Annotation
Chemical mapping of a 177-nucleotide RNA with 2A3 and DMS. Reactivities are given for positions 27 through 126. For 2A3 the reverse transcriptase was SuperScript II with manganese.

RNA sequence: GGGAACGACUCGAGUAGAGUCGAAAACAAACAAACCAACCACACUCAGAGCCCACAUAAAUCGAAGUAACCUCAUCUCUUCGAUGGAGAUGAAAAGGACGCAUUCGUCCAAAGGGCUCUGACAAAACAACACGUAUCUCUUCGGAGAUACGUGUUGAAAAGAAACAACAACAACAAC
Reactivity to 2A3 in 0.01 (KOAc 150mM, MgCl2 10mM, bicine 150mM(pH8.5), 24C), signal-to-noise 4, nucleotides 027 to 126: c040a010a100a010c040a060a120a020c010c020a010a040c030c020a070c000a020c040u010c000a000g000a000g000c020c000c000a080c010a050u120a040a070a010u050c020g020a040a010g030u060a050a050c010c010u040c010a010u000c010u000c020u090u080c050g100a080u250g030g000a010g000a010u010g030a080a050a020a060g000g010a020c050g030c070a170u120u080c030g010u010c020c000a000a050a030g000g000g000c000u000c000u000g000a000c000a000a020a000a030
Reactivity to DMS in 0.01 (KOAc 150mM, MgCl2 10mM, bicine 150mM(pH8.5), 24C), signal-to-noise 2, nucleotides 027 to 126: c090a140a080a050c080a000a110a110c190c230a100a070c060c210a130c150a120c190u000c000a000g000a010g040c000c000c000a070c010a020u040a080a040a070u000c010g010a050a030g000u040a090a240c100c080u000c030a000u000c040u000c000u000u010c160g000a110u050g000g000a080g000a000u000g000a010a000a100a040g000g000a040c050g000c280a200u000u020c030g000u000c020c100a020a000a070g000g000g000c000u000c080u000g000a010c190a050a110a030a110